[RMDB]
RNA sequence: GGGAACGACUCGAGUAGAGUCGAAAAGAUAUGGAGAAUCAUCGGACCGAAGAACUCGGAAACGAGGGAGGUCUGAUGAGUUCUCCUAAGUCAAAGCACAGUGCAUGGUUCGCCAUGCACUGUGCAAGAUGUAAAAUCGCUUCGGCGAUUUUACAUCAAAAGAAACAACAACAACAAC
Reactivity to DMS in 0.01 (KOAc 150mM, MgCl2 10mM, bicine 150mM(pH8.5), 24C), signal-to-noise 1, nucleotides 027 to 126: g010a050u000a300u000g030g000a010g010a020a020u000c000a000u010c010g050g000a010c000c030g000a120a100g010a110a180c000u000c000g020g000a210a030a070c030g000a010g010g000g010a030g020g010u000c000u010g000a010u010g000a030g020u000u000c000u010c010c010u020a000a070g010u000c070a110a110a110g000c010a010c010a010g010u000g030c030a020u000g000g000u000u010c210g030c000c000a000u000g000c000a000c000u000g010u000g000c040a010a020

This 177-nucleotide RNA was probed chemically with DMS.
The DMS profile rests on 1,098 reads.